The data come from the RNA Mapping Database (RMDB), library OK2TRN.
Structure probing data (2A3 and DMS) for a 177-nucleotide construct.
The reactions ran in a buffer of 150 mM KOAc, 10 mM MgCl2 and 150 mM bicine (pH 8.5), at 24 C.
RNA sequence: GGGAACGACUCGAGUAGAGUCGAAAACAAGGGCCUCAGCCAAGUUGGAACGCCGGGUUGUCCCCGUUGGUCACAAGCGGUCAGCUGCCGUUGCAGCGCAUAUCGAGAAGCAGCGGUCACCGCAGUCCAACCGCAAACAUUUCGAUGUUUGCGGUUGAAAAGAAACAACAACAACAAC
Reactivity to 2A3 in 0.01 (KOAc 150mM, MgCl2 10mM, bicine 150mM(pH8.5), 24C), signal-to-noise 2, nucleotides 027 to 126: c000a080a210g130g030g010c000c110u170c080a000g020c020c000a090a030g040u050u020g060g020a100a030c050g060c010c030g030g000g000u030u010g030u060c000c000c000c000g080u030u070g000g040u080c030a040c070a250a030g020c030g000g030u110c070a060g030c100u080g010c010c000g030u020u040g000c020a080g040c040g050c120a060u120a060u300c100g040a070g040a260a010g010c010a000g000c020g010g010u060c010a010c020c000g000c000a000g020u000c010
Reactivity to DMS in 0.01 (KOAc 150mM, MgCl2 10mM, bicine 150mM(pH8.5), 24C), signal-to-noise 3, nucleotides 027 to 126: c060a100a240g000g010g000c030c120u010c210a130g000c030c020a060a220g000u000u000g010g010a130a070c100g040c040c020g010g000g000u000u010g010u000c040c010c020c020g000u010u010g000g010u010c090a080c160a100a110g000c010g020g000u010c170a180g010c130u000g010c020c040g000u010u000g000c010a090g000c070g030c120a100u020a140u010c070g000a100g020a080a120g020c010a020g020c000g000g020u000c130a080c010c000g020c000a110g000u000c040